Chemical mapping of a 177-nucleotide RNA with 2A3 and DMS.
2A3 is a SHAPE reagent: it acylates the 2'-hydroxyl of flexible nucleotides of all four kinds.

[RMDB]
RNA sequence: GGGAACGACUCGAGUAGAGUCGAAAAUCCCUGUUCUUUGUACACACCGCCCGUCGUUAUCUAAGAUGGUGCUAUGUUCGAAGAGGGUUUUCCUUCUGAGGACGUAGGAUUAGAUUGGAUACAAGUCGAACUUAAUACCGUUCGCGGUAUUAAGUUCAAAAGAAACAACAACAACAAC
Reactivity to 2A3 in 0.01 (KOAc 150mM, MgCl2 10mM, bicine 150mM(pH8.5), 24C), signal-to-noise 2, nucleotides 027 to 126: u020c000c000c010u000g030u030u010c010u040u070u090g090u060a020c020a010c010a010c030c040g060c010c020c020g060u150c030g090u150u030a010u000c010u010a020a000g000a000u010g000g030u020g120c000u000a000u010g000u000u000c010g000a010a020g000a040g030g020g020u070u070u150u300c000c000u000u000c010u020g020a020g010g020a000c000g010u010a010g010g010a000u010u010a000g020a020u010u020g040g000a010u010a030c030a050a130g140u140c060
Reactivity to DMS in 0.01 (KOAc 150mM, MgCl2 10mM, bicine 150mM(pH8.5), 24C), signal-to-noise 3, nucleotides 027 to 126: u000c000c000c000u010g010u000u000c030u000u000u010g020u000a080c090a080c080a050c040c050g020c030c000c020g030u000c090g010u020u000a010u010c010u000a020a020g000a130u000g000g000u000g000c010u000a000u000g020u000u000c000g010a300a020g010a030g000g000g010u000u010u010u000c000c000u000u000c000u010g010a300g000g000a000c000g020u000a000g000g000a030u000u000a010g000a180u000u000g000g000a040u000a020c120a100a080g010u010c120